[RMDB]
This 177-nucleotide RNA was probed chemically with 2A3 and DMS. Values cover nucleotides 27 to 126.
RNA sequence: GGGAACGACUCGAGUAGAGUCGAAAAUGUGCGGGAGUGGUGCGCCAGUGACCACCACAUGCCAUUGUUGUGCCGUCGUUUUUCUUCAGUCACGCCGGAUGCGGCGCUCCCUGCACACCUUACGGUGGGCAGGGAAGAGAUUCGUCUCUUCCCUGCCAAAAGAAACAACAACAACAAC
Reactivity to 2A3 in 0.01 (KOAc 150mM, MgCl2 10mM, bicine 150mM(pH8.5), 24C), signal-to-noise 9, nucleotides 027 to 126: u080g000u010g000c000g010g020g010a020g020u050g140g300u040g030c020g010c010c020a030g020u010g030a020c000c020a010c040c020a020c020a030u120g100c030c040a110u080u100g040u050u060g030u040g040c070c050g080u090c050g020u040u000u030u080u110c060u120u130c060a030g010u020c010a010c040g050c060c080g090g010a130u110g020c000g020g000c000g000c000u000c010c000c010u030g000c010a000c000a020c000c000u080u180a080c080g030g100u130g040
Reactivity to DMS in 0.01 (KOAc 150mM, MgCl2 10mM, bicine 150mM(pH8.5), 24C), signal-to-noise 9, nucleotides 027 to 126: u000g020u000g020c010g010g000g010a050g030u000g010g010u000g010c050g010c020c020a140g010u000g000a050c020c060a080c060c040a060c110a060u010g010c080c090a120u010u000g010u000u000g010u000g010c130c100g000u000c070g000u000u000u000u000u000c060u010u010c160a110g000u000c050a050c030g010c150c100g000g010a080u010g020c010g010g000c010g000c020u000c010c000c000u010g030c030a030c000a050c020c010u000u010a090c200g010g010u010g010